Structure probing data (2A3) for a 177-nucleotide construct. Values are in units of 0.01, from 0 to 300, in steps of 10.

RNA sequence: GGGAACGACUCGAGUAGAGUCGAAAAGUUGGUCAAUGGUCGUUGGACACACGGGAUCUGGAAAAUCCACGUAUCUUCCUGUCCAGUACUCUAACUACCUUGCCAAGAAACUUGACCGUCGCCAACACCCUGCCAGGCUGUUCGCAGCCUGGCAGGGAAAAGAAACAACAACAACAAC
Reactivity to 2A3 in 0.01 (KOAc 150mM, MgCl2 10mM, bicine 150mM(pH8.5), 24C), signal-to-noise 1, nucleotides 027 to 126: g010u000u050g000g000u150c020a030a050u250g000g000u000c000g000u020u000g050g000a000c000a010c000a000c140g020g000g000a020u050c100u070g020g000a000a010a010a010u030c100c040a120c170g090u280a040u070c080u010u010c010c000u000g000u000c000c000a000g000u010a030c020u000c000u000a000a000c000u000a000c000c000u010u020g000c020c000a010a000g120a060a080a000c070u070u040g040a020c020c000g000u030c010g040c040c000a020a000c020a060
2A3 adducts were read by reverse transcription with SuperScript II with manganese.